[RMDB]
RNA sequence: GGGAACGACUCGAGUAGAGUCGAAAAGACGGGCCCCUUCUGGAACCUCCCGCACCGCCCGCGGAGGCUCUCGGCGGGCCGCCGAAAGGCGGGGGUAAAAACCAGCCGGGGGCGCGGCCCCCAAGCAAUCUAUCCAAAGCUUCGGCUUUGGAUAGAUAAAAGAAACAACAACAACAAC
Reactivity to 2A3 in 0.01 (KOAc 150mM, MgCl2 10mM, bicine 150mM(pH8.5), 24C), signal-to-noise 1, nucleotides 027 to 126: g080a010c000g020g110g000c000c010c000c000u040u020c000u020g040g040a070a050c010c000u100c010c000c020g000c030a070c010c000g020c010c000c000g010c030g100g050a010g120g090c040u030c010u000c160g160g020c010g000g010g030c020c030g070c080c040g140a130a040a000g070g000c000g020g000g000g000g010u040a050a100a000a030a030c010c010a010g050c120c130g040g000g000g000g010c030g000c000g010g060c000c020c000c000c030a060a010g000c010a000